An RNA of 177 nucleotides, treated with 2A3 and DMS and read out base by base. Values cover nucleotides 27 to 126. The RNA was probed in 150 mM KOAc, 10 mM MgCl2 and 150 mM bicine (pH 8.5) at 24 C. For DMS, 2,212 sequencing reads were counted. Source: RMDB library OK1LIB, as collected in RNAgym. The 2A3 profile rests on 4,021 reads.
[RMDB]
RNA sequence: GGGAACGACUCGAGUAGAGUCGAAAAUAAACAAAACAAAUUUAAACGAGUAAGGUGCAGCAGACAGCCUCGACAAAUGCACCUAGAAACGAGGCUUAAAGCACCAGAGGAAAACUCUGGUGCAAAAGGACAUCGUCCACUUCGGUGGAUGAUGUCCAAAAGAAACAACAACAACAAC
Reactivity to 2A3 in 0.01 (KOAc 150mM, MgCl2 10mM, bicine 150mM(pH8.5), 24C), signal-to-noise 1, nucleotides 027 to 126: u060a000a080a010c010a010a070a030a020c090a000a020a020u040u060u150a050a070a000c100g050a030g070u050a010a000g000g000u000g000c000a110g060c020a010g030a110c050a000g000c010c000u000c000g030a080c000a000a000a000u030g000c020a000c000c000u030a030g180a000a000a000c010g000a000g050g000c010u100u120a220a260a000g000c000a000c000c000a000g010a000g000g090a080a000a000a000c000u000c000u000g000g000u000g050c000a000a000a000a000
Reactivity to DMS in 0.01 (KOAc 150mM, MgCl2 10mM, bicine 150mM(pH8.5), 24C), signal-to-noise 2, nucleotides 027 to 126: u040a070a130a020c200a090a100a120a140c140a050a000a060u010u040u040a020a080a200c080g010a150g040u000a130a120g000g000u000g030c000a080g040c120a190g000a060c170a020g020c050c060u000c000g000a060c040a080a080a050u010g000c090a000c000c020u000a100g010a140a060a110c020g020a020g000g000c030u020u000a050a030a060g030c000a000c010c000a040g000a000g000g070a230a040a030a110c000u000c010u010g020g010u000g000c060a000a000a020a020